[RMDB]
RNA sequence: GGGAACGACUCGAGUAGAGUCGAAAAAAACCGAAACCAUCAUGGACGAGGCACCAUGCGCUCCGGAGGACUUCCUAGCGGAGGAAUCCCAGCAACACACUGCGAGGAGUGAAGCUGACAUUGAUGAGAGUAUACUAUAUUUCGAUAUAGUAUACUCAAAAGAAACAACAACAACAAC
Reactivity to 2A3 in 0.01 (KOAc 150mM, MgCl2 10mM, bicine 150mM(pH8.5), 24C), signal-to-noise 9, nucleotides 027 to 126: a000a000a010c090c030g060a210a080a020c080c020a060u090c020a030u070g050g040a070c070g070a130g030g020c030a030c050c030a090u150g070c030g010c020u030c010c010g030g010a040g010g040a060c020u060u060c020c000u070a080g080c080g090g010a010g010g010a010a020u020c000c010c010a010g020c010a060a060c050a010c020a010c120u070g020c050g080a070g020g010a030g020u040g020a030a010g010c030u040g030a040c030a090u110u160g030a050u070g050a060
Reactivity to DMS in 0.01 (KOAc 150mM, MgCl2 10mM, bicine 150mM(pH8.5), 24C), signal-to-noise 9, nucleotides 027 to 126: a060a040a070c020c020g010a100a060a090c160c060a060u010c030a050u020g000g000a080c120g010a090g000g010c050a110c100c070a050u010g020c080g010c010u010c030c070g010g010a050g000g010a300c060u010u000c000c010u020a110g010c140g010g000a030g000g010a170a110u010c020c020c050a070g000c040a070a160c090a060c080a090c030u010g010c130g010a090g010g010a060g010u000g000a050a160g000c020u010g000a070c070a050u010u020g010a060u010g000a180